[RMDB]
RNA sequence: GGGAACGACUCGAGUAGAGUCGAAAAUGUCUUCUGUGUAUCACUUGUAUGUCUUCAAUCAGGUCUUAUCAAGUGAUGUUAUGUUUGAAGAUGCCCAAGGUUUGAAAAAGUUCUACAAAGAAGUUAGCAGGCGAACGGUUCGCCGUUCGCAAAAGAAACAACAACAACAAC
Reactivity to DMS in 0.01 (KOAc 150mM, MgCl2 10mM, bicine 150mM(pH8.5), 24C), signal-to-noise 1, nucleotides 027 to 129: u070g010u030c040u000u030c030u050g000u060g040u010a040u000c000a100c030u030u020g070u030a090u040g000u000c030u010u000c280a060a170u060c200a070g070g040u030c020u130u000a000u100c070a100a000g000u010g010a040u050g000u040u100a060u020g030u000u000u000g040a050a020g040a000u120g020c050c040c020a000a000g000g000u030u030u050g020a060a110a040a130a200g020u040u000c000u040a100c300a150a060a100g000a100a070g050u020u030a080g060c120a050g020
Reactivity to 2A3 in 0.01 (KOAc 150mM, MgCl2 10mM, bicine 150mM(pH8.5), 24C), signal-to-noise 3, nucleotides 027 to 129: u200g000u000c020u010u000c010u000g110u000g010u060a000u000c000a020c000u000u070g030u070a000u040g030u000c020u060u050c120a030a300u070c050a050g020g150u030c100u100u150a120u160c000a000a000g000u000g000a040u000g000u000u120a020u000g070u030u070u080g010a050a000g010a000u100g030c010c000c000a020a080g130g010u020u080u120g120a030a020a010a000a000g190u170u000c030u000a080c090a070a140a030g080a080a000g010u050u100a050g070c030a030g050
Structure probing data (DMS and 2A3) for a 170-nucleotide construct. The DMS profile rests on 5,515 reads. For 2A3, 2,506 sequencing reads were counted. The reactions ran in a buffer of 150 mM KOAc, 10 mM MgCl2 and 150 mM bicine (pH 8.5), at 24 C. DMS adducts were read by reverse transcription with MarathonRT. 2A3 adducts were read by reverse transcription with SuperScript II with manganese.